[RMDB]
RNA sequence: GGGAACGACUCGAGUAGAGUCGAAAAUUGAAGGUAAAACAGCCUGUGGGUGAAACACGCCCACAGGGCCCAUUGGGCGCUAGCACUCUGGUAUCACGGUACCUUUGUGCGCCUGUUUUACCGAAGGACGCCCGUUUCUUCGGAAACGGGAAAAGAAACAACAACAACAAC
Reactivity to 2A3 in 0.01 (KOAc 150mM, MgCl2 10mM, bicine 150mM(pH8.5), 24C), signal-to-noise 2, nucleotides 027 to 129: u130u110g060a080a010g000g020u000a000a000a000a020c000a000g000c010c000u000g000u000g000g000g010u000g040a020a050a020c130a020c070g000c010c000c000a000c000a000g000g000g000c010c000c000a020u260u300g000g000g000c030g000c090u100a040g020c000a000c000u000c000u000g000g000u000a010u030c030a050c220g140g000u000a000c010c000u000u010u000g000u010g000c000g000c010c000u000g000u000u000u000u000a000c000c000g000a000a000g050g030a020c030g030
Reactivity to DMS in 0.01 (KOAc 150mM, MgCl2 10mM, bicine 150mM(pH8.5), 24C), signal-to-noise 2, nucleotides 027 to 129: u040u040g020a180a100g000g000u000a010a000a010a020c000a010g040c040c000u000g020u000g020g040g030u000g000a100a130a130c220a160c090g030c050c000c000a020c030a030g000g060g030c010c000c030a040u060u060g010g000g010c030g000c030u060a060g000c020a020c000u000c030u050g000g000u020a000u000c020a120c300g000g000u010a000c010c040u010u000u000g020u010g000c030g010c020c000u040g020u010u000u000u000a000c000c000g000a030a070g040g000a140c180g000
Structure probing data (2A3 and DMS) for a 170-nucleotide construct. It was measured as part of the RMDB library 15KLIB. Reactivities are given for positions 27 through 129. For 2A3, 13,945 sequencing reads were counted. The RNA was probed in 150 mM KOAc, 10 mM MgCl2 and 150 mM bicine (pH 8.5) at 24 C. 2A3 adducts were read by reverse transcription with SuperScript II with manganese.